[RMDB]
RNA sequence: GGGAACGACUCGAGUAGAGUCGAAAAGCGAAAGUUGCCAUGAGACCGUAACUUUCGUAGUCAUUGAUAAAGGGGCAGGUCUCGCUCUUUUGUCAUUGCGGUUGCCUAGAGGCAUGGGCGUUUACCGAAAAGAGCUCAUUCUUCGGAAUGAGCUCAACACCUGCAAGUAGUUCGCUACUUGCAGGUGAAAAGAAACAACAACAACAAC
Reactivity to 2A3 in 0.01 (KOAc 150mM, MgCl2 10mM, bicine 150mM(pH8.5), 24C), signal-to-noise 3, nucleotides 027 to 156: g020c010g000a010a000a000g010u010u020g010c010c030a130u170g070a060g010a170c050c030g020u010a000a000c000u010u010u000c010g000u000a000g030u020c030a030u010u050g020a010u020a020a000a000g030g000g010g000c020a030g110g130u080c060u080c110g000c000u010c000u000u030u010u020g010u000c020a020u000u090g040c030g010g020u040u090g000c000c010u060a070g010a070g120g100c100a080u080g030g000g000c010g040u080u100u060a080c010c010g020a010a060a040a070g010a000g000c000u000c000a010u000u000c010u010u070c130g000g010a010a000u000g000a000g010c000u000c000a000a000
Reactivity to DMS in 0.01 (KOAc 150mM, MgCl2 10mM, bicine 150mM(pH8.5), 24C), signal-to-noise 1, nucleotides 027 to 156: g050c030g000a020a030a060g000u000u000g020c000c030a200u010g030a200g010a150c080c090g000u000a020a010c010u010u010u000c000g030u000a010g040u000c060a040u000u000g000a030u000a010a040a010g000g020g000g000c000a110g050g020u000c070u010c040g000c020u000c000u000u000u010u000g010u010c010a060u000u000g000c000g010g010u000u000g030c010c030u010a140g000a180g010g000c100a090u000g000g010g020c040g020u000u010u010a120c000c000g000a040a050a170a180g020a060g030c030u000c000a030u000u000c000u000u010c300g020g000a040a000u000g000a020g000c000u000c000a010a070
Structure probing data (2A3 and DMS) for a 207-nucleotide construct. The reactions ran in a buffer of 150 mM KOAc, 10 mM MgCl2 and 150 mM bicine (pH 8.5), at 24 C. Values cover nucleotides 27 to 156. For DMS the reverse transcriptase was MarathonRT.